[RMDB]
RNA sequence: GGGAACGACUCGAGUAGAGUCGAAAAAGUCGGCUUGGAGGUUCAUUCGAAAGCUGUGGAGGGAGAGAACACAAAUCGAGAGGUUUCAGAGUCCAGGUCGCAAUUCCGCUCGAUAAAGGCGACUGCCGGGAUGGUCGUGCUUCGGCACGACCAUCCCAAAAGAAACAACAACAACAAC
Reactivity to 2A3 in 0.01 (KOAc 150mM, MgCl2 10mM, bicine 150mM(pH8.5), 24C), signal-to-noise 1, nucleotides 027 to 126: a020g060u060c040g040g000c030u030u050g020g020a040g080g010u070u260c040a010u070u040c090g090a140a090a150g060c090u020g000u040g080g000a050g000g100g000a040g000a010g000a000a000c050a000c060a000a230a040u000c000g030a000g010a020g030g010u050u260u100c040a150g000a000g210u000c000c030a020g000g040u030c000g000c110a070a070u100u070c020c000g000c140u040c010g040a060u070a080a100a000g020g020c040g020a010c130u060g030c000c050
Background
Structure probing data (2A3) for a 177-nucleotide construct. The 2A3 profile rests on 411 reads. The RNA was probed in 150 mM KOAc, 10 mM MgCl2 and 150 mM bicine (pH 8.5) at 24 C.